The data come from the RNA Mapping Database (RMDB), library OK2TST. The record gives the reactivity of an RNA of 177 nucleotides to DMS and 2A3.

RNA sequence: GGGAACGACUCGAGUAGAGUCGAAAAACUGGGACUGCCUCCGCGCGAUGGUGGGUGCGUGGGAGGGGCAGUGCGGCCAGUUGGACCAGUAUGGCAUGCAGCACACCCGCACCUUCUCCAACCUGUGAUCGAUAAUGACAUUCGUGUCAUUAUCGAUAAAAGAAACAACAACAACAAC
Reactivity to DMS in 0.01 (KOAc 150mM, MgCl2 10mM, bicine 150mM(pH8.5), 24C), signal-to-noise 6, nucleotides 027 to 126: a040c030u000g010g020g010a080c020u000g010c020c010u000c020c030g000c030g000c030g010a100u000g010g010u010g030g020g010u000g010c010g000u000g010g040g020a130g040g010g010g010c020a020g020u000g010c070g020g010c010c010a030g000u000u000g010g010a190c050c030a090g010u010a050u010g010g020c030a060u000g010c040a070g010c050a070c070a090c050c010c030g010c040a060c030c020u010u000c030u000c010c030a060a080c060c030u010g010u010g010
Reactivity to 2A3 in 0.01 (KOAc 150mM, MgCl2 10mM, bicine 150mM(pH8.5), 24C), signal-to-noise 5, nucleotides 027 to 126: a000c010u020g010g000g040a020c010u030g010c010c010u050c000c010g030c000g020c010g100a090u110g050g050u060g020g030g030u060g000c010g020u120g050g090g050a290g040g010g030g000c000a020g010u040g060c040g090g020c000c000a010g010u010u060g020g020a050c020c010a010g060u100a070u080g040g010c040a030u080g010c010a020g020c020a000c000a030c060c000c010g000c010a040c010c000u050u040c030u000c020c010a060a100c010c020u090g060u110g130
Values cover nucleotides 27 to 126. 2A3 is a SHAPE reagent: it acylates the 2'-hydroxyl of flexible nucleotides of all four kinds.